Chemical mapping of a 207-nucleotide RNA with 2A3 and DMS. The 2A3 profile rests on 892 reads. The DMS profile rests on 1,898 reads.
[RMDB]
RNA sequence: GGGAACGACUCGAGUAGAGUCGAAAAAUUUAACUCAAUCAGGAAACGAUCUGCGAUUCGAUUAUAUAAUACGAUCUUGGCCAAAAAGGUCGUUUAUUUUAUUUGAUUUGGAGCUUCACCUUGGAUUGGGACGAGGAAUGAGAAUCGGAGAAUACGAAUUAGCACACUAGUUCGCUAGUGUGCUAAUAAAAGAAACAACAACAACAAC
Reactivity to 2A3 in 0.01 (KOAc 150mM, MgCl2 10mM, bicine 150mM(pH8.5), 24C), signal-to-noise 2, nucleotides 027 to 156: a000u130u120u060a070a010c000u010c030a010a080u030c000a010g070g050a100a200a060c070g010a010u040c010u070g030c000g050a030u040u040c000g010a030u120u030a020u010a000u020a140a050u140a020c000g010a000u000c000u000u020g080g070c070c050a060a120a000a000a010g000g000u000c010g000u040u020u000a010u010u060u010u010a030u000u050u050g010a030u020u050u080g060g010a010g060c080u030u080c040a080c000c020u050u110g080g000a050u030u050g030g040g000a030c040g000a010g020g030a200a050u080g010a050g010a040a040u050c020g020g020a030g060a040a020u130a070c010g030a030
Reactivity to DMS in 0.01 (KOAc 150mM, MgCl2 10mM, bicine 150mM(pH8.5), 24C), signal-to-noise 1, nucleotides 027 to 156: a160u010u000u000a000a140c050u000c010a000a120u010c020a090g000g030a070a070a160c200g010a050u010c020u000g000c050g000a100u000u000c000g010a090u010u000a030u000a070u000a030a040u000a010c030g030a000u000c010u000u010g030g000c150c250a050a130a070a040a020g040g000u000c010g020u000u010u000a010u000u000u000u000a050u010u020u020g010a070u010u010u010g030g000a120g010c130u000u010c050a030c000c000u000u000g000g010a070u000u030g070g000g000a100c070g000a070g000g020a040a060u000g000a180g000a050a070u000c000g040g000a080g030a090a090u000a090c080g000a090